[RMDB]
Source: RMDB library 15KREP, as collected in RNAgym. Structure probing data (2A3 and DMS) for a 177-nucleotide construct. For 2A3 the reverse transcriptase was SuperScript II with manganese. Reactivities are given for positions 27 through 126. For 2A3, 2,286 sequencing reads were counted. The DMS profile rests on 1,124 reads.
RNA sequence: GGGAACGACUCGAGUAGAGUCGAAAAGAACCACCCGUAACAUAUUCACCAGCUACAAUUUUAGCUGGUAGUGUCUACACUAAUAGCUGCCUUGUAUCGUCUGAUGGACAACCUGGCGGUGAUGCUACGUUGUAGCACAGUUCGCUGUGCUACAACGAAAAGAAACAACAACAACAAC
Reactivity to 2A3 in 0.01 (KOAc 150mM, MgCl2 10mM, bicine 150mM(pH8.5), 24C), signal-to-noise 3, nucleotides 027 to 126: g060a020a030c020c000a030c040c020c010g000u020a020a010c010a050u050a170u080u170c040a000c000c000a000g000c000u030a060c090a300a300u110u190u070u100a010g000c000u000g000g020u000a000g010u000g000u000c050u070a020c050a040c060u100a050a080u030a130g010c010u000g000c010c000u020u030g050u080a150u110c050g030u020c000u060g230a160u300g060g010a000c000a010a020c000c000u000g000g000c000g000g000u030g010a070u090g030c020u040a070
Reactivity to DMS in 0.01 (KOAc 150mM, MgCl2 10mM, bicine 150mM(pH8.5), 24C), signal-to-noise 2, nucleotides 027 to 126: g010a180a160c060c060a050c040c030c030g030u000a050a070c030a020u000a090u000u010c120a030c000c010a000g020c020u000a000c300a180a140u000u000u020u000a000g000c010u010g000g010u000a000g000u010g000u000c110u000a090c000a090c170u010a040a060u000a210g010c000u010g000c020c020u000u000g000u000a070u010c190g020u000c000u020g030a140u010g000g000a030c000a070a040c020c010u000g000g020c030g000g010u000g000a070u000g010c030u010a080